[RMDB]
RNA sequence: GGGAACGACUCGAGUAGAGUCGAAAAGGAACUAUGUUCUCACCUGAAGCCUCCACAGGACCGCGAAAGCGAUCGGAAACGAAUGAGCAUAGUUCAGAGCUGAAGGAGGCACGGCUCAAAAUAAAAACGAGCAAGAUGUGUUCGCACAUCUUGUUCGAAAAGAAACAACAACAACAAC
Reactivity to 2A3 in 0.01 (KOAc 150mM, MgCl2 10mM, bicine 150mM(pH8.5), 24C), signal-to-noise 2, nucleotides 027 to 126: g140g000a000a000c000u000a000u000g000u300u050c060u000c030a110c000c000u000g090a300a040g000c000c000u010c010c000a020c000a000g000g030a010c040c040g010c020g070a100a050a030g020c020g030a050u150c060g030g080a030a030a040c050g030a050a080u040g000a000g000c000a000u010a000g000u000u000c000a000g000a010g000c010u010g010a100a020g010g010a010g000g000c010a010c000g000g000c000u000c000a020a040a000a000u100a010a040a010a010a000